[RMDB]
Chemical mapping of a 177-nucleotide RNA with 2A3 and DMS.
The RNA was probed in 150 mM KOAc, 10 mM MgCl2 and 150 mM bicine (pH 8.5) at 24 C.
The data come from the RNA Mapping Database (RMDB), library OK2TST.
For 2A3 the reverse transcriptase was SuperScript II with manganese.
RNA sequence: GGGAACGACUCGAGUAGAGUCGAAAAGGCGGGAAGGGCCGCCAUAGAGAUGGCGGAGAAGGAGAUGCCUGGGCUCAUGGCGCUCAGGGAGAAGUACGGGGACGCCAAACCUCUCGCGGGAGCAAGGCGACAAUGUAUGGUUCGCCAUACAUUGUCGAAAAGAAACAACAACAACAAC
Reactivity to 2A3 in 0.01 (KOAc 150mM, MgCl2 10mM, bicine 150mM(pH8.5), 24C), signal-to-noise 2, nucleotides 027 to 126: g040g030c090g010g010g060a100a040g090g040g000c010c020g010c000c010a010u030a020g130a010g020a020u040g000g000c010g040g040a060g050a060a030g080g100a100g000a060u070g070c000c000u020g010g020g000c020u030c090a200u140g120g010c080g000c000u010c020a000g020g040g000a070g010a030a050g020u070a040c080g010g000g000g010a010c020g010c030c000a050a050a040c030c010u030c010u030c020g060c110g000g020g020a020g030c030a050a000g080g010
Reactivity to DMS in 0.01 (KOAc 150mM, MgCl2 10mM, bicine 150mM(pH8.5), 24C), signal-to-noise 4, nucleotides 027 to 126: g000g020c100g000g010g000a120a110g010g020g010c010c000g010c000c010a010u000a120g000a130g010a150u000g010g020c010g000g000a120g010a110a100g010g000a120g000a140u000g010c000c000u000g020g000g000c020u010c090a110u010g020g030c190g020c000u010c000a030g000g000g000a080g000a110a090g000u000a080c140g000g000g000g000a170c090g000c040c020a040a050a140c200c020u000c030u010c070g020c160g020g000g000a080g010c070a090a090g020g000